[RMDB]
RNA sequence: GGGAACGACUCGAGUAGAGUCGAAAAGUACUGAAAGGAAGAGGUCAGAAUUCUCUGCGAGGAGCUCAGAGGAUCCUGAGGGAAGAGAGAAGGCGGCUGCGCUUGGACACAGCUCCGAGCUCGUGCUCCCUCCUUCAGGCACCCAAGUCUGAGUUGAAGGAUUAAAUCGUUUCGACGAUUUAAUCCUAAAAGAAACAACAACAACAAC
Reactivity to 2A3 in 0.01 (KOAc 150mM, MgCl2 10mM, bicine 150mM(pH8.5), 24C), signal-to-noise 1, nucleotides 027 to 156: g010u040a040c010u040g020a090a110a020g040g000a040a020g020a030g030g050u090c060a020g050a150a130u130u050c070u010c050u060g040c030g060a050g050g020a020g010c010u020c020a000g010a020g000g010a040u000c000c010u020g030a040g000g050g020a090a000g080a020g020a020g010a100a070g040g010c040g040g020c050u130g050c080g030c010u000u030g020g010a010c050a000c070a300g030c060u010c000c010g010a010g000c020u020c030g000u050g050c020u000c020c000c000u060c020c000u030u010c010a010g000g000c040a030c020c000c030a040a010g030u040c040u020g030a010g000u050u050g090a050